[RMDB]
Structure probing data (2A3) for a 177-nucleotide construct. Conditions: 150 mM KOAc, 10 mM MgCl2 and 150 mM bicine (pH 8.5), 24 C.
RNA sequence: GGGAACGACUCGAGUAGAGUCGAAAAAGCCUUGCUGCGGACGUCGAAGCGCUUCAUGGCCUCGCGAAGCUUGACGCGGACACUGUUGUACUUGACCCCUUCCACGUCCGCGAUCUCCUCCAUCGUCCGCGACGCUCCAUUUCGAUGGAGCGUCGCGAAAAGAAACAACAACAACAAC
Reactivity to 2A3 in 0.01 (KOAc 150mM, MgCl2 10mM, bicine 150mM(pH8.5), 24C), signal-to-noise 1, nucleotides 027 to 126: a000g040c040c010u090u100g110c140u150g020c000g000g040a000c000g000u020c010g060a070a000g010c000g000c000u080u030c040a120u070g070g000c040c030u050c040g010c050g010a080a020g000c090u120u060g000a060c000g040c060g000g000a160c050a000c110u020g160u160u060g050u280a140c190u020u160g010a040c000c000c020c000u040u000c010c000a080c000g000u050c000c000g000c000g000a000u000c030u010c040c000u020c000c000a100u060c010g070u050c040